[RMDB]
RNA sequence: GGGAACGACUCGAGUAGAGUCGAAAAGCUUCCUGCCGUCCCCCGACUGCCUCAUUCUUUGGAGCGUCCCCGAUGUCUGCAAAGAUGUGGAUUUGGACGUCCUCGUGGAAGCCCUAAAGCCCGUGGGCGUACAUCCCACUUUCGAGUGGGAUGUACGAAAAGAAACAACAACAACAAC
Reactivity to 2A3 in 0.01 (KOAc 150mM, MgCl2 10mM, bicine 150mM(pH8.5), 24C), signal-to-noise 2, nucleotides 027 to 126: g020c030u040u050c010c000u000g110c050c010g050u050c000c020c010c030c030g040a040c070u070g040c020c010u020c020a020u170u110c010u050u010u040g100g020a020g040c020g020u050c130c070c000c030g000a000u010g050u080c010u030g060c030a010a030a020g040a030u030g030u040g010g050a060u140u010u160g010g000a020c020g000u070c030c020u080c000g040u070g000g030a030a020g010c010c000c000u110a110a070a050g070c040c000c050g000u080g020g010g010
Reactivity to DMS in 0.01 (KOAc 150mM, MgCl2 10mM, bicine 150mM(pH8.5), 24C), signal-to-noise 4, nucleotides 027 to 126: g000c080u000u000c000c010u000g000c130c030g000u010c010c010c070c050c060g010a090c140u010g000c010c010u010c020a030u000u010c020u000u000u010g010g000a040g010c030g010u010c000c090c140c160g020a050u000g000u010c000u000g010c060a030a050a030g000a050u000g010u010g010g000a130u000u000u000g020g010a070c050g010u000c040c080u000c120g020u010g000g010a030a040g010c010c030c040u010a070a070a140g000c030c010c020g010u000g000g010g030
This 177-nucleotide RNA was probed chemically with 2A3 and DMS. DMS adducts were read by reverse transcription with MarathonRT. For DMS, 7,217 sequencing reads were counted. 2A3 adducts were read by reverse transcription with SuperScript II with manganese.